[RMDB]
RNA sequence: GGGAACGACUCGAGUAGAGUCGAAAAGAGUGGUUUCUCUACCAGCGAUAGGAACAUCUAUCGUGUUACAACCACGAGUAACACCUGAACAGGCGACUUUGAUCAACCUGUACAGAAAUGCACAUGCACGCUGUACCCAAUUCGUUGGGUACAGCGUAAAAGAAACAACAACAACAAC
Reactivity to DMS in 0.01 (KOAc 150mM, MgCl2 10mM, bicine 150mM(pH8.5), 24C), signal-to-noise 2, nucleotides 027 to 126: g010a080g010u000g030g000u000u010u000c010u030c050u000a260c150c110a130g070c000g040a030u000a000g000g030a150a120c300a160u000c010u000a020u000c020g010u000g010u000u020a030c090a010a200c050c000a100c090g010a250g000u030a040a060c070a130c130c010u000g000a100a010c010a010g000g110c170g000a130c200u020u000u010g030a110u010c110a080a110c020c000u010g040u000a070c000a020g010a070a060a050u000g010c090a040c290a060u000g000c150
Reactivity to 2A3 in 0.01 (KOAc 150mM, MgCl2 10mM, bicine 150mM(pH8.5), 24C), signal-to-noise 2, nucleotides 027 to 126: g140a000g020u010g050g050u010u050u010c120u000c040u100a140c030c040a010g020c000g000a010u000a010g060g090a300a200c020a240u020c000u010a000u000c000g030u020g000u060u070a060c050a040a060c000c010a020c000g000a030g000u020a030a020c040a040c030c040u000g010a020a000c010a000g000g050c030g060a050c120u190u210u300g140a210u260c000a060a110c000c000u020g010u020a040c000a000g090a050a110a050u140g040c100a100c070a140u120g100c040
Conditions: 150 mM KOAc, 10 mM MgCl2 and 150 mM bicine (pH 8.5), 24 C. The record gives the reactivity of an RNA of 177 nucleotides to DMS and 2A3. For DMS, 979 sequencing reads were counted. High 2A3 reactivity points to a flexible backbone, as in loops and unpaired stretches.